[RMDB]
This 207-nucleotide RNA was probed chemically with DMS and 2A3. Reactivities are given for positions 27 through 156. The DMS profile rests on 1,491 reads. The data come from the RNA Mapping Database (RMDB), library M2RFPK.
RNA sequence: GGGAACGACUCGAGUAGAGUCGAAAAGAAUUGGUAUGUAAGCUACUUCUUCCAGUAGCUGCGUCAUAACAUCAAGGUUAUGCACACUGAGCCGAAGCUCAGCUUCGGUCCUCCAAGGAAGACCAAAUACAGCUCAGCCCGUUCGCGGGCUGAGCAAGUGUGAUAUUACCUUCGGGUAAUAUCACACAAAAGAAACAACAACAACAAC
Reactivity to DMS in 0.01 (KOAc 150mM, MgCl2 10mM, bicine 150mM(pH8.5), 24C), signal-to-noise 1, nucleotides 027 to 156: g020a190a110u010u000g000g000u000a050u000g030u010a300a240g000c010u000a030c020u000u000c010u040u010c050c040a300g000u000a040g020c000u000g000c020g000u010c020a030u000a040a040c020a300u010c210a150a140g040g000u000u000a020u010g000c040a030c030a030c040u000g010a190g050c010c000g000a070a030g050c010u020c160a080g000c000u000u000c020g000g000u000c000c000u000c150c050a080a110g030g010a060a050g000a210c090c080a030a090a050u000a050c100a050g010c020u000c030a030g010c000c020c000g020u000u010c180g040c110g020g010g070c000u000g000a010g090c040a020a020
Reactivity to 2A3 in 0.01 (KOAc 150mM, MgCl2 10mM, bicine 150mM(pH8.5), 24C), signal-to-noise 2, nucleotides 027 to 156: g100a030a080u030u030g010g000u020a030u020g010u020a010a010g020c000u000a000c010u050u080c000u000u000c010c000a000g000u000a000g000c000u000g000c010g010u000c010a010u000a000a000c000a070u230c150a130a020g300g010u000u000a000u000g020c000a010c000a010c010u010g020a000g000c000c000g000a010a010g000c040u070c300a020g000c000u030u000c000g010g010u000c020c010u070c030c030a050a020g010g000a000a000g020a010c020c070a010a050a040u190a110c050a020g020c000u010c000a010g000c000c000c000g010u040u020c070g020c000g070g000g060c000u000g000a000g000c010a000a000